[RMDB]
RNA sequence: GGGAACGACUCGAGUAGAGUCGAAAAGAUAUGGACGCAUCCACGGCAACGACGAAGUCGGAAACGACAGAGUUGAAGUGGAGUGCGUCCUAAGUCAAACUGCGUACAGCUUCGGCUGUACGCAGAACUAGACGGUGAUGUUCGCAUCACCGUCUAGAAAAGAAACAACAACAACAAC
Reactivity to DMS in 0.01 (KOAc 150mM, MgCl2 10mM, bicine 150mM(pH8.5), 24C), signal-to-noise 1, nucleotides 027 to 126: g000a060u000a300u050g010g000a010c000g010c000a000u030c010c000a030c010g020g000c040a050a010c010g000a120c130g040a090a180g010u000c000g000g000a070a070a200c000g000a000c010a030g000a300g030u000u000g010a030a040g000u000g000g000a030g040u010g020c000g020u000c000c020u000a010a070g030u000c030a030a070a150c000u000g000c000g000u000a000c000a020g000c000u000u030c190g030g020c010u010g010u000a010c020g010c000a010g000a020a140
Reactivity to 2A3 in 0.01 (KOAc 150mM, MgCl2 10mM, bicine 150mM(pH8.5), 24C), signal-to-noise 1, nucleotides 027 to 126: g000a010u100a030u170g010g010a000c040g010c000a000u010c000c000a010c050g050g050c070a130a080c020g300a050c030g110a110a020g020u000c000g030g010a050a040a000c010g000a030c030a030g040a000g000u010u040g050a080a020g010u000g000g010a060g110u050g000c000g000u010c000c000u000a000a030g000u010c010a080a050a140c000u010g000c010g000u000a020c030a000g000c000u120u150c280g210g000c010u000g010u010a000c010g000c000a000g000a000a000